[RMDB]
RNA sequence: GGGAACGACUCGAGUAGAGUCGAAAAUCAUGUCAGUAAGCAUGCCGGGGAAUGGUGGUUUACCCCGUUAUCAAAUGAUUACUGACCAAUAAUUGGCGAAACUCGUUUCGCGUUGGCUGCCUAAUUCGUUACCGCUGACCCUUCGGGGUCAGCGGAAUCUAUAUGCGUUGUUCGCAACGCAUAUAGAAAAAGAAACAACAACAACAAC
Reactivity to DMS in 0.01 (KOAc 150mM, MgCl2 10mM, bicine 150mM(pH8.5), 24C), signal-to-noise 2, nucleotides 027 to 156: u000c060a070u000g010u010c020a000g000u000a030a000g030c000a020u000g010c260c050g000g020g020g030a090a220u000g010g030u020g030g030u000u000u000a300c010c000c020c020g020u010u010a040u010c130a110a120a020u020g020a040u000u000a000c010u000g040a050c010c160a090a030u000a030a280u000u000g000g030c000g000a300a170a020c040u010c140g020u000u000u000c000g030c000g010u000u000g020g030c120u000g000c030c030u000a070a180u010u000c050g000u010u000a160c000c010g040c000u010g040a010c000c010c030u000u000c300g030g000g000g020u000c000a000g030c000g000g020a000a020
Reactivity to 2A3 in 0.01 (KOAc 150mM, MgCl2 10mM, bicine 150mM(pH8.5), 24C), signal-to-noise 2, nucleotides 027 to 156: u070c060a050u210g000u010c010a000g010u010a010a000g000c000a010u030g090c060c000g030g000g010g010a040a080u040g010g020u040g050g050u100u100u230a130c010c000c000c030g030u070u090a220u090c090a160a110a050u010g000a000u000u000a000c000u000g000a000c000c010a040a090u080a060a100u030u080g030g000c010g000a030a020a020c030u030c060g040u000u050u000c020g000c000g000u010u040g040g040c080u060g030c010c010u050a090a090u070u120c060g040u060u170a080c010c000g060c000u010g020a000c000c000c020u010u060c300g020g000g000g000u000c000a000g000c020g030g000a000a000
An RNA of 207 nucleotides, treated with DMS and 2A3 and read out base by base. Values are in units of 0.01, from 0 to 300, in steps of 10. Conditions: 150 mM KOAc, 10 mM MgCl2 and 150 mM bicine (pH 8.5), 24 C. For DMS the reverse transcriptase was MarathonRT.